[RMDB]
RNA sequence: GGGAACGACUCGAGUAGAGUCGAAAAGAUAUGGAUCUUCGAUGAAAUGGACACCUAUGAAGUCGGAAACGAUGGAGGUGGCCAUGGAGAAGAUCCUAAGUCAAAUCCGGAAGUUCGCUUCCGGAAACCUAAUCAGAAUCUUCGGAUUCUGAUUAGGAAAAGAAACAACAACAACAAC
Reactivity to DMS in 0.01 (KOAc 150mM, MgCl2 10mM, bicine 150mM(pH8.5), 24C), signal-to-noise 4, nucleotides 027 to 126: g010a040u000a300u010g000g000a010u000c000u000u000c010g000a100u010g030a140a100a000u000g000g000a010c000a000c000c000u000a240u010g010a100a210g010u000c000g010g010a110a110a170c010g010a000u000g000g000a000g020g010u000g010g010c000c010a000u010g010g000a070g010a020a010g000a010u000c000c000u000a010a040g000u000c020a080a110a190u000c000c010g000g000a030a010g000u000u020c290g000c000u000u000c000c000g000g000a000a040a070
Reactivity to 2A3 in 0.01 (KOAc 150mM, MgCl2 10mM, bicine 150mM(pH8.5), 24C), signal-to-noise 4, nucleotides 027 to 126: g020a030u090a060u190g000g000a010u010c010u000u010c040g300a300u070g010a040a040a000u010g000g000a010c000a030c000c010u300a300u300g020a010a010g020u000c010g000g030a060a060a050c010g000a000u020g020g050a020g010g000u000g000g000c000c000a000u000g000g000a040g000a000a000g000a000u000c000c000u000a050a000g040u020c030a050a020a140u000c000c000g020g000a000a000g000u080u260c300g030c210u010u000c000c000g000g000a030a010a010